[RMDB]
RNA sequence: GGGAACGACUCGAGUAGAGUCGAAAAGAUAUGGAGUAAGGGUGCUAGAACCUCGGAAACGAGAGUUCUUGGACCACCUUACUCCUAAGUCAAAAGCCAUGGUGAGCCUUCGGGCUCACCAUGGCAACAGAAUGUACAGGUUCGCCUGUACAUUCUGAAAAGAAACAACAACAACAAC
Reactivity to 2A3 in 0.01 (KOAc 150mM, MgCl2 10mM, bicine 150mM(pH8.5), 24C), signal-to-noise 2, nucleotides 027 to 126: g020a010u060a030u100g010g010a010g000u000a010a020g070g000g010u160g230c030u010a010g000a000a010c010c000u020c010g030g000a030a030a010c000g010a000g020a020g020u010u000c000u010u040g070g270a020c020c000a020c020c000u010u000a000c000u000c000c000u000a010a010g020u000c020a020a070a200a090g000c000c000a020u020g000g000u010g040a010g020c030c070u110u140c300g060g040g000c000u010c000a010c050c020a000u000g010g010c000a000a000
Reactivity to DMS in 0.01 (KOAc 150mM, MgCl2 10mM, bicine 150mM(pH8.5), 24C), signal-to-noise 3, nucleotides 027 to 126: g000a050u000a300u010g010g000a020g010u000a010a010g010g000g020u000g000c020u000a000g020a010a020c000c000u000c000g020g000a050a090a120c000g010a020g000a130g010u000u000c000u000u000g010g000a110c180c020a100c070c000u010u000a000c010u000c000c000u000a000a040g000u010c020a080a070a150a120g010c000c010a010u000g000g010u010g000a010g020c010c000u010u010c200g030g010g020c010u000c000a000c000c000a000u000g010g010c000a000a010